An RNA of 177 nucleotides, treated with DMS and read out base by base.
The data come from the RNA Mapping Database (RMDB), library RFM100.
The reactions ran in a buffer of 150 mM KOAc, 10 mM MgCl2 and 150 mM bicine (pH 8.5), at 24 C.
The DMS profile rests on 1,882 reads.
[RMDB]
RNA sequence: GGGAACGACUCGAGUAGAGUCGAAAAUCCUCUGGCCAUUUGCAGACUAAGGAACUGGCCUCCAAAGAGACUUGAUUUUUGUGUUACUUUCCAGCCCCUUCUCCCCCCCUUUCAUCCUCCAAGAACCUUAAGGGCUAAUCUUCGGAUUAGCCCUUAAAAAAGAAACAACAACAACAAC
Reactivity to DMS in 0.01 (KOAc 150mM, MgCl2 10mM, bicine 150mM(pH8.5), 24C), signal-to-noise 2, nucleotides 027 to 126: u030c040c020u010c150u030g020g020c040c000a000u000u000u060g000c100a130g010a090c060u090a080a080g000g000a100a060c100u000g000g010c000c000u000c090c090a000a090a150g030a070g000a110c070u010u020g000a080u020u010u000u000u010g000u000g030u000u010a100c040u000u000u000c010c010a110g000c050c010c020c030u010u000c010u000c010c000c000c010c010c010c000u000u010u010c070a060u010c020c000u010c020c050a030a080g000a100a120c080c100